An RNA of 207 nucleotides, treated with 2A3 and DMS and read out base by base. The reactions ran in a buffer of 150 mM KOAc, 10 mM MgCl2 and 150 mM bicine (pH 8.5), at 24 C. The 2A3 profile rests on 1,157 reads. For DMS the reverse transcriptase was MarathonRT. It was measured as part of the RMDB library M2RFPK. High DMS reactivity at an A or C suggests that its Watson-Crick edge is free.
[RMDB]
RNA sequence: GGGAACGACUCGAGUAGAGUCGAAAAGAAAGUUCAAGCAAGCUAGCCGGCAAAAAAGCAAACUUGACCACCAAGGAUAAAAGAGAUCUUAUCCAAGGAUGCAAAAGAUAAACUCACUUUUGACACCAAAACAGGGAGUAGUUCGCUACUCCCUGAAGAAACAAGAGUUGUUCGCAACUCUUGUUUCAAAAGAAACAACAACAACAAC
Reactivity to 2A3 in 0.01 (KOAc 150mM, MgCl2 10mM, bicine 150mM(pH8.5), 24C), signal-to-noise 2, nucleotides 027 to 156: g060a000a050a000g030u060u020c060a000a010g000c020a100a030g000c020u020a010g060c020c070g060g000c120a050a080a000a020a010a010g010c030a090a080a010c020u010u000g020a030c020c010a010c000c020a020a100g020g000a010u010a010a040a010a020g100a020g000a040u040c010u000u030a010u000c000c010a020a020g010g000a010u050g010c000a030a030a000a000g060a010u100a100a110a020c040u050c030a030c000u060u040u040u030g100a120c070a060c070c030a020a050a030a140c010a020g000g010g000a000g000u010a000g000u030u080c150g000c080u010a000c010u000c000c000c000u000g000a000a000
Reactivity to DMS in 0.01 (KOAc 150mM, MgCl2 10mM, bicine 150mM(pH8.5), 24C), signal-to-noise 1, nucleotides 027 to 156: g030a120a050a110g000u000u000c010a020a150g000c000a030a220g050c040u000a300g000c060c010g070g000c040a000a040a090a170a100a070g010c010a050a150a100c030u000u000g000a110c100c060a100c030c030a080a300g030g000a000u000a000a010a090a040g000a210g000a100u000c050u000u010a040u000c020c000a060a160g000g000a100u000g010c040a000a030a030a060g000a100u000a060a020a040c010u000c060a090c080u000u000u000u020g040a010c020a040c030c040a040a050a090a120c040a030g020g010g010a030g020u000a010g000u000u010c290g000c030u000a030c000u000c000c000c000u000g010a010a050